[RMDB]
Structure probing data (DMS and 2A3) for a 177-nucleotide construct. Values cover nucleotides 27 to 126.
RNA sequence: GGGAACGACUCGAGUAGAGUCGAAAAGCUGGAGCGACACGUCAAGGAGGCCUUCCGUUUGCUCAACAAGUCCAUCAUUCGCGUGGAGCAACCGGAUAUUCAUUUGGAUGACGACGAGGGUUUGGACCUGCCGAAUUGAAUUCGUUCAAUUCGGCAGAAAAGAAACAACAACAACAAC
Reactivity to DMS in 0.01 (KOAc 150mM, MgCl2 10mM, bicine 150mM(pH8.5), 24C), signal-to-noise 3, nucleotides 027 to 126: g000c050u000g000g010a100g010c040g010a070c070a060c110g000u000c070a070a090g000g030a090g010g010c080c120u000u000c020c030g010u000u000u000g010c010u000c030a070a060c090a090a230g020u010c080c060a080u000c070a170u000u000c080g030c170g010u000g000g020a020g010c010a000a000c020c000g000g010a050u010a040u020u010c070a100u000u000u000g000g020a090u000g000a060c080g000a090c110g010a130g010g000g010u000u000u010g010g020a150c100
Reactivity to 2A3 in 0.01 (KOAc 150mM, MgCl2 10mM, bicine 150mM(pH8.5), 24C), signal-to-noise 2, nucleotides 027 to 126: g000c030u040g020g000a050g020c030g030a050c040a010c110g070u080c060a020a030g060g030a030g000g080c030c000u050u000c000c000g030u020u040u020g010c010u010c000a010a050c030a040a020g100u000c060c030a150u120c020a050u170u170c060g030c040g050u040g090g010a030g000c000a000a050c010c010g000g000a010u040a070u090u060c120a110u000u000u180g110g000a040u060g040a020c070g000a030c030g030a060g040g040g000u010u070u150g030g000a010c000